[RMDB]
RNA sequence: GGGAACGACUCGAGUAGAGUCGAAAAUGAUACGAUGACGAGUAUGAAAAAGUAAAGAGGAUUUAUUACCGUUUUUAAGUACAUGUUUUAUGUACUUACUAAUUCGUAAUGAAUCGAUUUCUUUAUUCCAUAUGUAAAUCUUCGGAUUUACAUAUGGAAAAGAAACAACAACAACAAC
Reactivity to 2A3 in 0.01 (KOAc 150mM, MgCl2 10mM, bicine 150mM(pH8.5), 24C), signal-to-noise 3, nucleotides 027 to 126: u100g000a000u010a040c040g050a060u120g120a030c080g030a030g060u040a040u090g100a080a090a020a020a030g090u120a070a080a010g110a030g140g000a010u020u010u000a000u020u000a020c020c030g010u000u030u010u010u020a010a000g000u010a010c000a000u020g150u110u200u090u110a010u010g000u010a000c000u000u000a000c010u000a000a030u050u130c010g000u000a010a000u010g000a000a000u000c010g010a000u030u020u000c010u000u090u090a170u060u050
Reactivity to DMS in 0.01 (KOAc 150mM, MgCl2 10mM, bicine 150mM(pH8.5), 24C), signal-to-noise 2, nucleotides 027 to 126: u010g010a080u010a040c060g010a130u020g030a110c120g030a170g030u000a040u010g000a070a070a070a100a120g010u030a060a040a070g050a140g000g000a010u000u000u000a010u010u000a010c000c080g020u000u000u000u000u000a000a000g030u000a010c010a000u000g000u030u010u010u010a000u000g000u000a010c000u000u020a000c020u010a010a000u000u000c110g000u010a020a000u000g010a000a020u000c010g000a190u010u010u000c000u000u000u000a070u000u000

Chemical mapping of a 177-nucleotide RNA with 2A3 and DMS.
It was measured as part of the RMDB library RFMREP.
In probing experiments dimethyl sulfate is read out at A N1 and C N3, which are open when not base-paired.
The 2A3 profile rests on 3,687 reads.
The reactions ran in a buffer of 150 mM KOAc, 10 mM MgCl2 and 150 mM bicine (pH 8.5), at 24 C.